[RMDB]
An RNA of 177 nucleotides, treated with DMS and read out base by base.
Source: RMDB library OK2TST, as collected in RNAgym.
RNA sequence: GGGAACGACUCGAGUAGAGUCGAAAACCACCUUUCCCCGCUUUCUAUUCCACAAAGCCGCCAUUGUCAUCAUGGCCCGUUCUCAAUGAGCUGUUGGGUACACCUCCCAGACGGGGUGGUGGCCGGGCGGUUACCUCCUGUUCGCAGGAGGUAACCGAAAAGAAACAACAACAACAAC
Reactivity to DMS in 0.01 (KOAc 150mM, MgCl2 10mM, bicine 150mM(pH8.5), 24C), signal-to-noise 1, nucleotides 027 to 126: c040c020a160c100c050u000u010u000c010c000c000c050g000c090u000u010u010c040u000a100u000u010c060c040a060c110a060a060a130g030c040c060g000c040c000a060u040u000g010u000c070a030u010c040a080u000g010g030c020c000c030g030u000u000c020u000c040a150a100u010g010a100g030c040u000g000u000u020g000g030g010u040a070c090a030c080c010u010c020c080c040a090g040a010c140g040g000g000g020u000g010g020u000g000g100c030c040g020g000g000

Annotation:
The RNA was probed in 150 mM KOAc, 10 mM MgCl2 and 150 mM bicine (pH 8.5) at 24 C.